[RMDB]
RNA sequence: GGGAACGACUCGAGUAGAGUCGAAAAAGAGGAGUGAACGUCUUUGGAGUAGGAAAGGAUGAUUCGUCAAACGAAUAAACAAUUUCACAAAUGGAUGUUAAUGUGUUAGUGGGAAAUUUCUUGACGCUAGUGGAAUUGAAAAUUCUAACGGAUGAUGUAGAGCACAGUUUUUCGAAACUGUGCUCUAAAAAGAAACAACAACAACAAC
Reactivity to 2A3 in 0.01 (KOAc 150mM, MgCl2 10mM, bicine 150mM(pH8.5), 24C), signal-to-noise 3, nucleotides 027 to 156: a010g080a040g040g020a030g000u100g020a110a020c040g020u020c040u070u070u050g030g020a010g010u040a040g010g030a020a000a020g020g010a030u070g010a010u010u030c040g040u070c110a040a080a140c060g030a030a020u060a100a040a020c040a030a050u020u070u060c010a010c010a010a100a040u090g060g020a050u060g010u090u110a090a040u080g040u040g010u050u030a040g010u040g050g000g080a030a120a020u100u140u020c010u010u080g020a030c030g000c040u000a040g030u030g020g000a010a010u030u040g060a080a150a000a000u020u040c030u040a060a030c030g020g000a030u050g010a000u080g090
Reactivity to DMS in 0.01 (KOAc 150mM, MgCl2 10mM, bicine 150mM(pH8.5), 24C), signal-to-noise 1, nucleotides 027 to 156: a100g010a100g000g010a070g030u010g050a040a050c080g000u040c070u000u010u010g010g030a060g030u000a040g040g010a040a060a140g010g000a050u000g000a220u000u000c010g060u000c090a050a090a240c110g000a050a030u000a070a090a110c030a080a070u000u000u000c010a060c030a030a050a070u000g020g000a120u000g010u020u000a060a140u000g000u010g050u010u000a060g060u010g030g000g000a110a060a090u000u010u000c010u000u000g020a060c080g010c040u000a060g050u000g000g030a020a070u010u000g000a090a080a100a160u010u000c020u010a050a030c010g000g000a100u000g000a100u000g030
Structure probing data (2A3 and DMS) for a 207-nucleotide construct. Values cover nucleotides 27 to 156. Conditions: 150 mM KOAc, 10 mM MgCl2 and 150 mM bicine (pH 8.5), 24 C. For DMS the reverse transcriptase was MarathonRT. It was measured as part of the RMDB library OK3TST.